[RMDB]
Structure probing data (2A3) for a 177-nucleotide construct.
2A3 adducts were read by reverse transcription with SuperScript II with manganese.
Conditions: 150 mM KOAc, 10 mM MgCl2 and 150 mM bicine (pH 8.5), 24 C.
RNA sequence: GGGAACGACUCGAGUAGAGUCGAAAAGAUAUGGAUGUAGUCUGCAACAGCCUGUCCAUCGGAAACGAUGGCAGGACAUGCAGCUACAUCCUAAGUCAAAACGACAAGAGCUUCGGCUCUUGUCGAAGAUCCCACAGAGGUUCGCCUCUGUGGGAUCAAAAGAAACAACAACAACAAC
Reactivity to 2A3 in 0.01 (KOAc 150mM, MgCl2 10mM, bicine 150mM(pH8.5), 24C), signal-to-noise 1, nucleotides 027 to 126: g010a000u020a000u040g010g010a000u000g010u020a050g100u110c030u030g030c150a300a180c080a300g080c010c020u050g170u280c050c000a000u000c040g020g010a000a030a000c000g000a020u010g050g010c030a000g010g030a030c010a040u170g010c000a000g000c000u000a000c000a000u000c000c000u010a010a000g010u020c040a030a060a110a140c010g020a000c010a010a020g020a000g000c050u120u200c300g140g000c000u020c000u030u000g000u010c020g010a000a020
The 2A3 profile rests on 1,343 reads. High 2A3 reactivity points to a flexible backbone, as in loops and unpaired stretches. The data come from the RNA Mapping Database (RMDB), library TTRDES.